[RMDB]
RNA sequence: GGGAACGACUCGAGUAGAGUCGAAAAAAAUCUAGAUAAGUUGAAGUUCAAAGAGGUCUGUAAAACUACUACUGGUAUACCUGAAUACAACUUUAUCAUCUACGACUCAUCAGAUCGUGGCCAGGAAAAAGGGAGAACUUCGGUUCUCCCAAAAGAAACAACAACAACAAC
Reactivity to 2A3 in 0.01 (KOAc 150mM, MgCl2 10mM, bicine 150mM(pH8.5), 24C), signal-to-noise 4, nucleotides 027 to 129: a000a000a000u090c000u050a020g000a000u010a020a000g000u000u000g100a170a000g020u030u000c090a070a110a030g130a010g020g020u020c050u040g120u190a010a060a040a090c040u140a020c040u030a010c060u070g040g010u100a020u020a070c020c000u000g020a010a000u050a030c000a010a000c000u050u040u060a030u040c030a000u030c020u050a030c020g020a020c020u000c020a030u030c030a010g050a050u000c000g060u010g040g170c000c000a040g050g050a070a070a100a000a070
Reactivity to DMS in 0.01 (KOAc 150mM, MgCl2 10mM, bicine 150mM(pH8.5), 24C), signal-to-noise 2, nucleotides 027 to 129: a000a000a000u130c100u000a000g020a030u080a030a060g000u100u000g000a040a130g020u020u000c110a060a090a150g080a020g050g020u020c130u050g070u200a020a040a010a050c160u130a040c090u020a120c030u100g010g000u000a000u000a070c030c040u040g010a000a000u000a120c090a030a000c000u020u010u030a050u040c060a010u000c120u050a100c070g020a040c000u000c030a020u000c050a110g010a130u000c090g000u010g020g070c000c000a190g050g040a060a050a010a040a000

Source: RMDB library 15KLIB, as collected in RNAgym. Chemical mapping of a 170-nucleotide RNA with 2A3 and DMS. For DMS, 4,377 sequencing reads were counted. The 2A3 profile rests on 4,896 reads. DMS adducts were read by reverse transcription with MarathonRT. Reactivities are given for positions 27 through 129.